An RNA of 177 nucleotides, treated with DMS and 2A3 and read out base by base. The RNA was probed in 150 mM KOAc, 10 mM MgCl2 and 150 mM bicine (pH 8.5) at 24 C. DMS adducts were read by reverse transcription with MarathonRT. The 2A3 profile rests on 653 reads. 2A3 adducts were read by reverse transcription with SuperScript II with manganese. It was measured as part of the RMDB library OK2TST.
RNA sequence: GGGAACGACUCGAGUAGAGUCGAAAAGAUCUGUAAGGUGAGUUAUAAUUGAUGUAUUGGAAUAUUUAGGAAAAGGGCACUGGGAAUAUGCUAGGAACACCUGAUGGAGGUAUCUUUAUUUCCACGGUACAACCACUUUAUUCGUAAAGUGGUUGUAAAAAGAAACAACAACAACAAC
Reactivity to DMS in 0.01 (KOAc 150mM, MgCl2 10mM, bicine 150mM(pH8.5), 24C), signal-to-noise 2, nucleotides 027 to 126: g000a040u000c040u010g000u010a060a060g010g010u010g000a100g000u000u000a070u020a120a100u010u010g000a080u000g030u010a070u010u000g010g010a090a070u000a040u000u000u010a110g020g000a020a090a050a090g000g000g030c060a020c080u010g010g010g000a040a040u000a030u000g000c070u010a080g010g020a040a100c090a040c050c010u000g010a080u000g010g010a050g020g020u010a020u000c060u000u000u000a140u040u000u000c000c010a100c280g010g030
Reactivity to 2A3 in 0.01 (KOAc 150mM, MgCl2 10mM, bicine 150mM(pH8.5), 24C), signal-to-noise 1, nucleotides 027 to 126: g030a060u060c020u100g070u040a010a010g070g010u080g050a080g030u200u210a100u120a190a180u110u130g020a060u100g030u140a110u050u180g030g020a090a110u070a100u200u120u080a100g010g010a100a060a000a000g050g020g010c050a010c080u020g020g030g050a080a040u040a020u130g000c030u000a040g140g000a120a000c000a030c010c000u070g000a140u070g010g090a030g050g070u060a060u090c050u010u100u010a080u030u070u050c020c000a050c000g000g030